The record gives the reactivity of an RNA of 177 nucleotides to 2A3 and DMS. High 2A3 reactivity points to a flexible backbone, as in loops and unpaired stretches. DMS (dimethyl sulfate) methylates the pairing face of unpaired adenines and cytosines. Reactivities are given for positions 27 through 126. The RNA was probed in 150 mM KOAc, 10 mM MgCl2 and 150 mM bicine (pH 8.5) at 24 C. It was measured as part of the RMDB library TTRDES.
RNA sequence: GGGAACGACUCGAGUAGAGUCGAAAAGAUAUGGAUCCGAAGUCGACGAUAAGAGGCACUCGGAAACGAGUGGCCUCUUUUGACGUCGCCGAGGAUCCUAAGUCAAACACAUGGUUCGCCAUGUGAACGUUUUAAUCAAGUUCGCUUGAUUAAAACGAAAAGAAACAACAACAACAAC
Reactivity to 2A3 in 0.01 (KOAc 150mM, MgCl2 10mM, bicine 150mM(pH8.5), 24C), signal-to-noise 3, nucleotides 027 to 126: g010a020u090a040u180g010g010a000u010c010c010g010a040a010g110u240c030g010a020c010g030a050u030a170a020g000a010g010g000c000a010c010u000c000g050g010a160a050a020c000g000a000g090u020g020g000c010c000u000c010u000u000u010u000g000a020c000g010u000c000g000c000c010g000a050g000g000a000u010c000c010u000a000a000g000u000c040a080a090a040c010a010c000a010u010g000g120u070u100c300g020c110c010a000u010g000u020g010a070a020
Reactivity to DMS in 0.01 (KOAc 150mM, MgCl2 10mM, bicine 150mM(pH8.5), 24C), signal-to-noise 8, nucleotides 027 to 126: g010a040u000a300u010g000g000a010u000c000c000g000a200a120g000u000c020g020a010c010g010a150u000a010a010g000a020g020g020c010a050c000u000c000g010g010a110a070a190c000g000a020g020u000g000g020c000c010u000c000u000u000u000u000g010a210c130g010u000c010g020c030c020g000a300g000g000a000u000c000c000u000a010a090g000u010c040a110a130a270c010a000c000a010u000g010g010u010u020c300g010c000c000a010u010g010u000g000a090a190